The record gives the reactivity of an RNA of 207 nucleotides to 2A3. Values cover nucleotides 27 to 156. The reactions ran in a buffer of 150 mM KOAc, 10 mM MgCl2 and 150 mM bicine (pH 8.5), at 24 C.
[RMDB]
RNA sequence: GGGAACGACUCGAGUAGAGUCGAAAAGUCAACGUCGUCGCCGAUAACGCCGAACAGGAGUACGGGUCGGCCCGUAUGCGGCGGCUGCGGAUCCUCGGCCGGGCAGGCGAGGCCGGAUGAGCCGCUGGCCGGAUCUCGAAAAGGCCCUCGUCGACCACUUCCUUUUGGAUUUCGAUCCAAAAGGAAGAAAAGAAACAACAACAACAAC
Reactivity to 2A3 in 0.01 (KOAc 150mM, MgCl2 10mM, bicine 150mM(pH8.5), 24C), signal-to-noise 2, nucleotides 027 to 156: g100u080c030a060a000c010g030u040c010g000u000c010g040c020c000g000a020u040a080a050c080g000c030c030g060a090a070c090a280g040g020a040g020u090a030c040g000g010g100u180c050g040g150c010c000c000g040u050a060u130g020c010g000g010c000g000g000c000u000g000c000g010g050a070u060c020c000u040c010g070g000c080c040g020g000g050c140a070g000g000c020g010a030g010g000c010c000g010g000a030u080g020a030g020c030c010g030c100u110g110g000c060c000g020g030a110u110c030u010c020g050a090a080a020a070g010g020c060c000c020u010c000g030u040c030g040a080c030c030a040